The data come from the RNA Mapping Database (RMDB), libraries RFM100 and RFMREP.
The record gives the reactivity of an RNA of 177 nucleotides to DMS and 2A3.
[RMDB]
RNA sequence: GGGAACGACUCGAGUAGAGUCGAAAAGGCCCCAAAUGAUGAGGGUUACUUUGUACGAAUGUCAGUGAAAUUGAAUUAAACAACGAAAAAUGCUUCAUGGCUUAACGGAGAUUUAUGAGGAAAACCGGUAGCAUAUAAGAUUCGUCUUAUAUGCUACAAAAGAAACAACAACAACAAC
Reactivity to DMS in 0.01 (KOAc 150mM, MgCl2 10mM, bicine 150mM(pH8.5), 24C), signal-to-noise 9, nucleotides 027 to 126: g030g010c050c000c010c080a070a100a100u020g010a090u010g010a080g010g000g010u000u000a100c040u000u000u010g020u010a080c160g010a090a050u010g010u010c020a040g010u010g000a060a100a100u010u010g000a090a070u010u010a060a070a090c100a050a060c090g000a020a060a060a070a080u020g000c040u000u000c050a030u010g000g010c040u000u010a070a120c070g010g000a080g000a100u010u010u020a050u010g010a090g010g000a070a030a070a090c060c050g010
Reactivity to 2A3 in 0.01 (KOAc 150mM, MgCl2 10mM, bicine 150mM(pH8.5), 24C), signal-to-noise 9, nucleotides 027 to 126: g040g000c010c000c000c010a040a130a110u300g060a100u110g030a140g030g000g000u030u040a050c020u060u060u050g070u050a050c040g080a120a040u110g040u070c040a040g080u030g100a040a050a080u120u050g050a020a010u110u130a160a110a060c060a040a010c050g150a050a060a030a030a030u110g020c020u040u060c030a070u120g030g000c020u060u060a100a020c020g040g000a040g010a060u020u070u100a130u150g040a070g030g060a030a040a010a020c020c010g020
For 2A3 the reverse transcriptase was SuperScript II with manganese.
The RNA was probed in 150 mM KOAc, 10 mM MgCl2 and 150 mM bicine (pH 8.5) at 24 C.